[RMDB]
RNA sequence: GGGAACGACUCGAGUAGAGUCGAAAAAGGCCUCUGAAUAUACAACUCGAUAAGUUGAGAUUCAGAGAACGUCUCAUGAAUCUGUCGGGAGGAUCGGCACAGGUCCCGGCGCUUCAGGUGGAGGGACUAAGCCCAUAAUCUUCGGAUUAUGGGCUUAAAAAGAAACAACAACAACAAC
Reactivity to DMS in 0.01 (KOAc 150mM, MgCl2 10mM, bicine 150mM(pH8.5), 24C), signal-to-noise 2, nucleotides 027 to 126: a140g030g020c170c000u000c000u000g000a010a030u010a100u010a120c000a010a030c000u010c170g030a100u000a140a050g020u000u000g000a090g000a010u000u000c000a020g010a000g000a050a070c110g000u000c000u000c030a170u000g000a080a050u000c040u000g060u000c030g000g000g010a100g000g010a110u010c080g010g010c060a130c120a120g040g000u010c010c010c000g010g030c040g000c210u000u000c100a030g000g030u000g010g020a100g010g020g010a080c130